[RMDB]
Source: RMDB library OK3TST, as collected in RNAgym. An RNA of 207 nucleotides, treated with 2A3 and DMS and read out base by base. For 2A3, 1,190 sequencing reads were counted. The RNA was probed in 150 mM KOAc, 10 mM MgCl2 and 150 mM bicine (pH 8.5) at 24 C.
RNA sequence: GGGAACGACUCGAGUAGAGUCGAAAAUACAGGCAUGAGCCACCACACCCGGCCAGCAAUUUUGAAAAACAGUAAAGUGGGAGUAAUCAUUCUACCCAAUCUCAAGGCUUACUAUAUAGCUACGAUAAUCAAGGCUGUGUGGUAUUGGUGGAGUGACACUCCCAUUCUGUUUCGACAGAAUGGGAGUAAAAGAAACAACAACAACAAC
Reactivity to 2A3 in 0.01 (KOAc 150mM, MgCl2 10mM, bicine 150mM(pH8.5), 24C), signal-to-noise 3, nucleotides 027 to 156: u140a000c020a040g050g000c020a110u100g010a070g050c000c000a020c000c000a040c000a010c020c040c000g040g030c010c000a040g040c080a100a100u000u070u050u200g100a080a050a000a020a050c050a030g090u220a070a090a020g040u060g020g010g010a010g010u020a030a020u070c000a030u030u150c010u150a300c000c010c060a050a080u050c040u000c070a040a090g080g020c000u040u030a030c120u050a060u110a080u060a120g020c000u070a030c050g070a110u120a170a050u130c030a170a010g030g000c000u000g010u020g020u090g090g020u000a120u010u150g000g030u000g020g010a030g030u100g030a010c010
Reactivity to DMS in 0.01 (KOAc 150mM, MgCl2 10mM, bicine 150mM(pH8.5), 24C), signal-to-noise 1, nucleotides 027 to 156: u010a170c080a040g010g000c000a070u010g000a150g010c080c040a070c020c010a060c030a070c000c020c030g000g000c020c030a080g020c130a060a060u000u000u000u010g020a140a010a050a060a080c040a050g000u010a030a040a070g020u000g000g030g000a130g010u010a110a080u010c110a220u010u000c000u000a070c000c000c040a040a040u000c030u010c040a070a250g010g000c050u000u010a130c060u000a070u000a130u010a060g050c010u000a110c180g010a070u000a060a170u000c040a050a180g010g040c030u010g000u010g040u010g040g020u030a060u000u000g020g010u010g000g010a130g030u000g030a130c150